[RMDB]
RNA sequence: GGGAACGACUCGAGUAGAGUCGAAAAGAUAUGGAUGCCCUGGACGAUGAGUCCGGGUCGGAAACGACCCAGGACGAGUCCCUGGCAUCCUAAGUCAAAGUCGCGUUCUGUUCGCAGAACGCGACAACUUGCAAUGAUACUUCGGUAUCAUUGCAAGAAAAGAAACAACAACAACAAC
Reactivity to DMS in 0.01 (KOAc 150mM, MgCl2 10mM, bicine 150mM(pH8.5), 24C), signal-to-noise 1, nucleotides 027 to 126: g000a010u000a010u010g000g010a000u000g010c010c000c040u010g000g020a020c010g020a210u010g000a050g010u010c000c020g010g000g010u000c010g010g000a000a010a030c000g020a010c000c000c000a090g110g010a010c000g000a010g020u000c000c000c010u000g010g020c000a010u000c000c000u010a000a070g000u000c000a120a130a130g000u000c010g040c000g020u000u000c000u000g000u010u030c300g020c000a000g000a000a000c010g000c010g000a000c010a030a070
Reactivity to 2A3 in 0.01 (KOAc 150mM, MgCl2 10mM, bicine 150mM(pH8.5), 24C), signal-to-noise 1, nucleotides 027 to 126: g010a010u020a020u060g010g010a000u010g020c010c040c020u020g000g000a000c010g220a290u300g000a000g000u000c000c000g000g000g000u000c000g000g000a010a000a000c000g000a020c040c020c220a240g000g000a000c020g000a030g030u000c010c000c010u020g000g000c000a000u000c000c000u000a000a000g000u030c020a060a140a010g020u000c000g000c000g000u000u000c000u020g100u020u140c300g020c110a010g000a010a010c000g040c000g000a000c010a010a020

The data come from the RNA Mapping Database (RMDB), library TTRDES. Chemical mapping of a 177-nucleotide RNA with DMS and 2A3. High 2A3 reactivity points to a flexible backbone, as in loops and unpaired stretches. The reactions ran in a buffer of 150 mM KOAc, 10 mM MgCl2 and 150 mM bicine (pH 8.5), at 24 C. DMS adducts were read by reverse transcription with MarathonRT. 2A3 adducts were read by reverse transcription with SuperScript II with manganese.